About this RNA
Chemical mapping of a 177-nucleotide RNA with 2A3 and DMS. Conditions: 150 mM KOAc, 10 mM MgCl2 and 150 mM bicine (pH 8.5), 24 C. The data come from the RNA Mapping Database (RMDB), library M2PK50. The DMS profile rests on 18,746 reads.
[RMDB]
RNA sequence: GGGAACGACUCGAGUAGAGUCGAAAAUUGAACGGAUUCGUCCGUUCAACGCGUCCGAUCCAAACGUAGUACAAAAGUACAGACGAAAGCACAAGGAUCAAAUGAUACAGCCGUUCGCGGCUGUAAACUCAAUGACAUUAUUCGUAAUGUCAUUGAGAAAAGAAACAACAACAACAAC
Reactivity to 2A3 in 0.01 (KOAc 150mM, MgCl2 10mM, bicine 150mM(pH8.5), 24C), signal-to-noise 9, nucleotides 027 to 126: u010u010g000a000a000c000g000g020a010u040u060c160g060u010c040c000g000u000u000c000a000a000c020g020c050g060u020c020c050g000a010u010c010c010a050a060a080c030g020u030a020g000u000a040c030a040a300a130a080g010u010a010c010a070g150a050c040g090a190a060a040g100c080a060c040a190a100g010g000a000u010c010a010a080a030u180g030a020u020a040c010a000g000c020c000g010u060u120c240g010c010g110g000c000u000g000u010a010a000a000
Reactivity to DMS in 0.01 (KOAc 150mM, MgCl2 10mM, bicine 150mM(pH8.5), 24C), signal-to-noise 9, nucleotides 027 to 126: u000u000g000a010a010c000g010g000a020u000u010c230g020u000c000c000g020u000u000c000a010a010c090g010c130g010u000c020c020g010a030u000c010c010a070a120a160c030g010u000a070g010u000a010c020a090a070a090a140g010u000a010c000a080g010a080c040g010a110a070a090g020c130a080c170a100a120g000g000a010u000c010a100a070a070u010g010a200u000a010c010a000g010c000c000g020u000u010c220g020c010g010g000c000u000g010u000a000a060a170